[RMDB]
RNA sequence: GGGAACGACUCGAGUAGAGUCGAAAAGAAACAGGAUCGACAAGGGUGUAAAGAUCGGUCUUUUACUCGGCAUGAUACCACCGUUAUCGGGUCAACAGAGUAGUUGCAAAUGACAACAAUGCUCAGGAAGGGGUAGCACCGUUCGCGGUGCUACCAAACACUGUAGUCAGUUCGCUGACUACAGUGUAAAAGAAACAACAACAACAAC
Reactivity to 2A3 in 0.01 (KOAc 150mM, MgCl2 10mM, bicine 150mM(pH8.5), 24C), signal-to-noise 6, nucleotides 027 to 156: g040a010a100a020c070a040g060g020a020u010c020g030a020c040a080a140g130g120g040u150g050u190a130a120a020g030a110u010c010g010g000u000c000u010u080u020u060a120c060u030c010g000g000c000a000u100g010a010u030a030c000c010a010c010c000g060u050u070a020u060c050g010g010g000u010c010a010a020c030a030g020a010g010u060a020g020u020u020g010c050a090a240a300u190g060a150c010a020a000c000a030a170u100g010c000u020c040a010g070g070a050a080g070g040g000g000u000a000g000c000a000c010c000g010u030u070c190g000c010g080g000u000g000c000u000a000c000c000a000a000
Reactivity to DMS in 0.01 (KOAc 150mM, MgCl2 10mM, bicine 150mM(pH8.5), 24C), signal-to-noise 3, nucleotides 027 to 156: g000a140a120a090c090a100g020g010a030u000c010g000a040c020a160a110g030g030g030u010g020u000a080a090a130g010a090u000c000g020g010u000c020u000u000u000u000a090c020u030c010g040g040c010a110u000g030a080u010a100c030c010a080c010c030g030u000u010a030u000c120g030g000g000u010c040a110a160c090a120g010a060g040u000a070g030u010u000g000c000a060a100a210u030g020a140c030a040a040c030a060a070u000g000c010u010c010a120g000g000a100a080g010g010g010g030u000a010g010c010a010c000c000g020u010u000c290g030c030g040g010u000g000c000u010a010c000c000a020a030